[RMDB]
The record gives the reactivity of an RNA of 177 nucleotides to DMS and 2A3.
DMS adducts were read by reverse transcription with MarathonRT.
Conditions: 150 mM KOAc, 10 mM MgCl2 and 150 mM bicine (pH 8.5), 24 C.
RNA sequence: GGGAACGACUCGAGUAGAGUCGAAAAGAGUAAGGGAACGACUCGAGUAGAGUCGAAAAGUCUGACCAGCUAUGAGGUCAUACAUUGUCAUAGCAAGAUGGCAGAAGUGAGACUGCCACACACAGAAAUGGGAUUUAUACUUCGGUAUAAAUCCCAUAAAAGAAACAACAACAACAAC
Reactivity to DMS in 0.01 (KOAc 150mM, MgCl2 10mM, bicine 150mM(pH8.5), 24C), signal-to-noise 3, nucleotides 027 to 126: g050a100g000u000a020a070g000g000g000a110a110c030g000a000c000u000c020g020a100g030u010a120g000a010g000u000c000g000a020a040a050a110g030u010c100u000g000a000c010c000a170g000c000u000a030u000g000a000g010g040u020c040a010u070a060c300a080u060u050g020u000c010a000u000a000g030c030a110a130g020a160u000g000g010c000a030g010a020a090g050u020g000a200g030a170c020u000g000c000c000a000c080a110c290a180c280a080g000a030a110
Reactivity to 2A3 in 0.01 (KOAc 150mM, MgCl2 10mM, bicine 150mM(pH8.5), 24C), signal-to-noise 3, nucleotides 027 to 126: g180a000g030u230a020a100g000g020g020a040a000c010g000a000c000u000c000g000a010g020u090a010g000a000g010u010c000g000a030a000a000a000g120u050c120u050g010a010c000c000a000g000c010u000a000u000g010a000g060g000u050c100a010u090a130c090a050u160u300g040u000c000a000u000a000g000c000a030a040g030a040u070g000g000c000a000g030a230a030g130u040g110a090g050a020c000u000g050c000c000a000c010a000c000a000c000a020g120a030a210